This 177-nucleotide RNA was probed chemically with DMS and 2A3. The DMS profile rests on 932 reads. The 2A3 profile rests on 2,106 reads.
[RMDB]
RNA sequence: GGGAACGACUCGAGUAGAGUCGAAAAGAUAUGGAAAUCGACUGUACAGAGCUCCCGUCGGAAACGACGGAAGAGCGACGAAGUAUUCGAUUUCCUAAGUCAAACUCACCUCGUUCGCGAGGUGAGAGUGUUGACUUAGCUUCGGCUAAGUCAACACAAAAGAAACAACAACAACAAC
Reactivity to DMS in 0.01 (KOAc 150mM, MgCl2 10mM, bicine 150mM(pH8.5), 24C), signal-to-noise 1, nucleotides 027 to 126: g010a080u000a110u050g000g000a000a000a020u000c000g010a030c300u030g000u000a050c020a130g000a210g050c000u000c000c010c000g020u000c000g060g010a080a010a050c010g000a000c000g000g000a060a020g030a030g010c010g020a030c190g000a060a070g000u000a020u000u010c000g010a040u000u000u000c000c000u010a010a050g010u000c010a140a130a120c000u000c010a000c000c000u000c010g040u010u020c200g000c010g000a020g000g010u010g010a020g020a010
Reactivity to 2A3 in 0.01 (KOAc 150mM, MgCl2 10mM, bicine 150mM(pH8.5), 24C), signal-to-noise 1, nucleotides 027 to 126: g020a000u040a010u030g010g010a000a020a030u000c010g000a020c170u300g040u100a050c100a220g240a030g170c000u000c020c000c000g000u040c020g020g050a000a010a040c000g000a000c010g000g000a160a080g020a000g030c020g020a030c110g220a300a090g020u040a020u000u060c010g000a020u020u000u020c000c000u000a000a000g020u030c020a070a000a160c010u040c000a000c000c000u010c010g000u070u040c300g000c000g150a000g000g000u000g000a000g010a030